Source information
Conditions: 150 mM KOAc, 10 mM MgCl2 and 150 mM bicine (pH 8.5), 24 C. This 177-nucleotide RNA was probed chemically with DMS. For DMS, 1,224 sequencing reads were counted.
RNA sequence: GGGAACGACUCGAGUAGAGUCGAAAAAAAAAGGAACUAUGUUCAGGCAUGAAGCCUCCACGUGCGUGCGAAAGCACCCGGAAACGGCUGAGCAUAGUUCCGAGCUGAAGGAGCCACGGCUCAAAAAGGUAACCUUAGGAUUCGUCCUAAGGUUACCAAAAGAAACAACAACAACAAC
Reactivity to DMS in 0.01 (KOAc 150mM, MgCl2 10mM, bicine 150mM(pH8.5), 24C), signal-to-noise 1, nucleotides 027 to 126: a020a010a030a050a070g010g030a010a000c010u000a000u000g000u000u000c010a000g010g000c010a000u000g000a060a080g000c130c010u010c010c020a250c020g010u000g000c010g020u000g000c000g000a100a070a120g010c010a020c000c030c000g000g020a080a090a130c020g010g070c020u000g030a010g040c010a010u000a010g000u000u000c000c010g010a010g000c000u000g020a150a080g000g010a020g020c080c040a180c060g030g000c000u000c020a010a010a060a100a060